[RMDB]
RNA sequence: GGGAACGACUCGAGUAGAGUCGAAAAGAGGUAAGCUGCUGUUGAAUGGGCUCCUUGGGAUAGCCAGUACCUUCAUCUUCAUUCAUCCUGCUGAGCUGUUUCGGCUUUAAGUUCUUUAACAAUGUCUUUUUAGCAACAUCAUUACAUCAUUUUAGGCGCCGGAAUAGGUAUUCGUACCUAUUCCGGCAAAAGAAACAACAACAACAAC
Reactivity to 2A3 in 0.01 (KOAc 150mM, MgCl2 10mM, bicine 150mM(pH8.5), 24C), signal-to-noise 1, nucleotides 027 to 156: g030a030g000g000u060a060a020g010c070u100g010c060u070g040u170u090g080a130a120u110g000g000g000c000u030c010c000u110u100g070g000g000a030u070a080g000c030c020a000g020u050a060c020c010u040u000c030a100u030c070u090u040c010a050u040u080c010a130u020c030c040u010g020c030u020g050a020g070c030u030g020u090u040u060c050g030g000c000u000u070u070a130a000g030u050u140c000u040u000u000a110a110c100a070a070u110g090u070c000u140u080u110u080u140a040g020c070a040a110c000a030u170c030a050u070u150a010c020a040u130c080a070u040u110u000u120a080g000g040c030
Structure probing data (2A3) for a 207-nucleotide construct. Values are in units of 0.01, from 0 to 300, in steps of 10.